[RMDB]
RNA sequence: GGGAACGACUCGAGUAGAGUCGAAAAAUUGGGCCUAAAGCGUCCGUAGCUUGCUGUGUAAGUCCAUUGGGAAAUCGACCAGCUCAACUGGUCGGCGUCCGGUGGAAACUACCACCAGGCUUGGGGCGGAAUAACGCUUAUUCGUAAGCGUUAUUCCAAAAGAAACAACAACAACAAC
Reactivity to 2A3 in 0.01 (KOAc 150mM, MgCl2 10mM, bicine 150mM(pH8.5), 24C), signal-to-noise 9, nucleotides 027 to 126: a000u170u130g050g050g040c030c020u120a150a100a030g080c040g050u030c000c000g020u000a000g000c000u010u010g000c020u010g040u030g010u130a000a000g020u000c000c010a000u010u040g240g000g000a010a040a030u010c000g000a000c000c000a010g010c080u080c220a090a230c040u000g000g000u000c000g000g000c000g020u000c000c000g000g010u000g000g000a010a020a000c000u000a000c000c000a000c020c000a000g000g000c000u030u040g040g000g000g010c030
Reactivity to DMS in 0.01 (KOAc 150mM, MgCl2 10mM, bicine 150mM(pH8.5), 24C), signal-to-noise 6, nucleotides 027 to 126: a130u010u010g000g010g010c040c010u010a050a110a120g010c060g010u010c010c010g020u010a020g010c000u000u000g010c240u020g000u020g000u000a000a020g000u010c000c000a020u000u000g020g050g000a020a030a020u000c000g010a010c000c000a010g030c140u060c300a120a170c010u010g000g010u010c000g010g020c300g000u000c000c000g010g010u010g000g000a020a030a040c020u000a060c010c000a010c120c000a020g000g000c000u000u010g010g000g000g010c050